[RMDB]
RNA sequence: GGGAACGACUCGAGUAGAGUCGAAAAGAUAAUGUCUUCGGACAUUAUCCACGCCUAAAGGCUAUAAUUAAUUAGCUAAGCCUGCUAAUUAAAAUGGCAUUAACAACUGUCCAUUCGUGGACAGUAACUGUCGAUUACUUUUCGAAGUAAUCGACAGAAAAGAAACAACAACAACAAC
Reactivity to DMS in 0.01 (KOAc 150mM, MgCl2 10mM, bicine 150mM(pH8.5), 24C), signal-to-noise 3, nucleotides 027 to 126: g000a030u000a000a000u000g000u000c000u010u010c170g010g010a010c000a000u000u010a000u000c000c020a120c300g000c020c000u010a070a090a080g000g020c010u000a010u000a130a100u000u000a000a000u000u000a000g010c000u000a120a160g040c260c240u000g010c000u010a010a010u010u000a000a010a140a030u000g000g020c010a110u010u000a040a100c180a110a040c000u000g010u010c000c000a040u000u010c210g000u000g010g000a000c000a000g010u000a030a110
Reactivity to 2A3 in 0.01 (KOAc 150mM, MgCl2 10mM, bicine 150mM(pH8.5), 24C), signal-to-noise 3, nucleotides 027 to 126: g000a000u010a010a000u000g000u000c010u020u080c260g060g000a000c000a000u000u000a000u000c000c030a020c040g070c000c000u130a210a100a010g140g000c010u020a010u020a120a120u060u010a000a010u000u000a010g000c010u070a140a040g190c050c100u050g000c000u000a010a020u000u040a010a020a020a050u020g010g000c020a050u080u120a050a050c070a040a030c000u000g010u000c010c010a020u020u070c180g130u070g000g000a000c000a000g010u000a000a020
This 177-nucleotide RNA was probed chemically with DMS and 2A3. It was measured as part of the RMDB library M2PK50. The RNA was probed in 150 mM KOAc, 10 mM MgCl2 and 150 mM bicine (pH 8.5) at 24 C.